[RMDB]
RNA sequence: GGGAACGACUCGAGUAGAGUCGAAAAAAACUUUACGCAAUGGACGUAAACAGUUAAUUAUUACUGAAAUUCCAUAUGAAGUGAACAAAAGUAGCUUAGUAAAACGUAUCGAUGAAUUACGUGCUGACCUCCUUAUCUUAUUCGUAAGAUAAGGAGGAAAAGAAACAACAACAACAAC
Reactivity to 2A3 in 0.01 (KOAc 150mM, MgCl2 10mM, bicine 150mM(pH8.5), 24C), signal-to-noise 6, nucleotides 027 to 126: a000a000a000c020u040u020u010a010c020g010c030a030a090u070g040g020a020c010g030u020a040a050a070c030a020g050u040u050a100a130u230u200a100u120u110a050c000u000g020a020a050a080u080u010c010c000a020u050a070u230g100a070a010g050u040g060a050a020c070a150a210a080a030g040u040a030g000c010u060u070a030g060u170a120a110a040a010c010g010u000a000u100c100g110a160u150g080a140a150u110u050a010c000g010u040g060c050u050g040a050
Reactivity to DMS in 0.01 (KOAc 150mM, MgCl2 10mM, bicine 150mM(pH8.5), 24C), signal-to-noise 5, nucleotides 027 to 126: a050a030a060c110u010u000u000a020c040g010c070a200a040u000g010g000a090c100g010u010a030a040a160c040a040g000u000u000a070a080u010u010a140u010u000a070c020u020g000a110a060a110u000u000c000c000a040u000a070u000g000a060a040g010u010g000a080a210c090a040a050a070a070g010u010a140g010c030u000u010a060g010u010a060a030a070a050c030g000u000a020u010c090g010a100u000g000a080a050u010u010a010c020g030u000g020c100u000g000a220